[RMDB]
RNA sequence: GGGAACGACUCGAGUAGAGUCGAAAAGAUGAGAACAUACUGUUCAGUUGGGCCAUCAGGUGACACUCCAAUUCUUGCAGGAGGUCACGAGCAAGAGAAAGAGGACGGCCUGACUUAACAAAAGAAAAGGUGCAGGUAUGUUCGCAUACCUGCACCUAAAAGAAACAACAACAACAAC
Reactivity to 2A3 in 0.01 (KOAc 150mM, MgCl2 10mM, bicine 150mM(pH8.5), 24C), signal-to-noise 2, nucleotides 027 to 126: g070a080u280g000a040g020a140a000c020a020u190a040c030u000g000u020u000c010a000g000u000u000g000g000g010c000c000a040u110c030a140g000g170u020g000a060c090a120c200u000c000c010a040a210u230u220c020u040u300g180c150a070g000g000a050g000g000u000c000a000c010g030a100g000c070a130a000g020a010g040a180a000a010g170a020g060g000a000c000g000g000c000c000u000g020a000c000u000u000a000a000c030a000a160a000a010g150a010a220a030
An RNA of 177 nucleotides, treated with 2A3 and read out base by base. Conditions: 150 mM KOAc, 10 mM MgCl2 and 150 mM bicine (pH 8.5), 24 C. 2A3 adducts were read by reverse transcription with SuperScript II with manganese.